[RMDB]
RNA sequence: GGGAACGACUCGAGUAGAGUCGAAAACGGGGCUGUCGGGGCACGCGUUAGGGUCCCAGGACUUCUCACGUGCAUCACAGCCACUCCCAGCUGGGGAGCACCUUCUAGAGAAGGGAGAGCUGUGGGGCUAUAUGGAAUGGUUCGCCAUUCCAUAUAGAAAAGAAACAACAACAACAAC
Reactivity to DMS in 0.01 (KOAc 150mM, MgCl2 10mM, bicine 150mM(pH8.5), 24C), signal-to-noise 9, nucleotides 027 to 126: c150g000g010g000g010c030u000g000u000c100g020g010g000g020c010a010c020g000c070g010u000u000a050g010g010g010u000c000c020c150a170g020g010a040c020u000u000c020u000c020a050c040g000u000g000c010a070u000c010a040c000a010g000c000c010a130c030u000c000c000c000a210g000c110u000g010g010g000g010a080g020c110a100c020c020u000u000c020u010a140g010a190g010a050a040g000g000g010a090g000a130g010c020u000g020u000g010g000g000g010
Reactivity to 2A3 in 0.01 (KOAc 150mM, MgCl2 10mM, bicine 150mM(pH8.5), 24C), signal-to-noise 9, nucleotides 027 to 126: c030g010g040g000g020c030u030g030u100c130g020g000g030g020c020a000c020g030c020g030u040u080a080g080g000g020u020c030c020c020a140g070g060a010c020u130u040c010u090c020a050c010g010u020g010c010a040u030c010a000c000a000g000c000c010a090c020u010c010c010c000a030g060c080u110g030g010g010g040a030g020c020a070c020c010u060u040c050u140a180g030a030g020a240a020g010g020g010a120g020a020g050c020u020g040u120g040g000g010g000